[RMDB]
RNA sequence: GGGAACGACUCGAGUAGAGUCGAAAAGUUCGAACUCAAGAAGAGAAGAUUUUCGAGGAAAUACUCCCAAGAAGUUCCCGGAGGGAUCCAAGAGACGGAUGACUUUCCCCUAUUGGUUGGGAAAAGUAUGGGCUCCGGUUCGCCGGAGCCAAAAGAAACAACAACAACAAC
Reactivity to DMS in 0.01 (KOAc 150mM, MgCl2 10mM, bicine 150mM(pH8.5), 24C), signal-to-noise 2, nucleotides 027 to 129: g010u130u010c080g100a090a150c040u020c000a170a100g010a230a040g000a030g040a080a180g030a090u000u000u000u000c000g030a000g000g000a110a220a230u010a070c210u070c020c060c050a000a140g050a000a250g020u000u040c000c000c080g060g000a120g030g070g020a150u030c020c100a110a020g000a070g070a150c120g000g020a010u000g000a110c040u030u020u020c000c000c000c000u010a140u030u060g000g020u050u000g000g000g000a020a000a000a120g040u130a060u070g000
Reactivity to 2A3 in 0.01 (KOAc 150mM, MgCl2 10mM, bicine 150mM(pH8.5), 24C), signal-to-noise 2, nucleotides 027 to 129: g050u110u050c010g030a200a020c000u030c010a030a060g060a070a050g000a060g000a070a040g000a110u000u030u010u010c010g000a070g070g060a000a210a000u060a040c010u000c020c000c020a080a040g030a000a000g000u010u000c030c000c010g000g030a020g030g050g000a030u030c010c010a010a010g000a060g020a090c100g020g070a020u090g010a020c000u040u010u010c020c000c000c040u030a100u180u270g130g000u100u030g000g000g000a000a000a040a000g030u060a080u070g000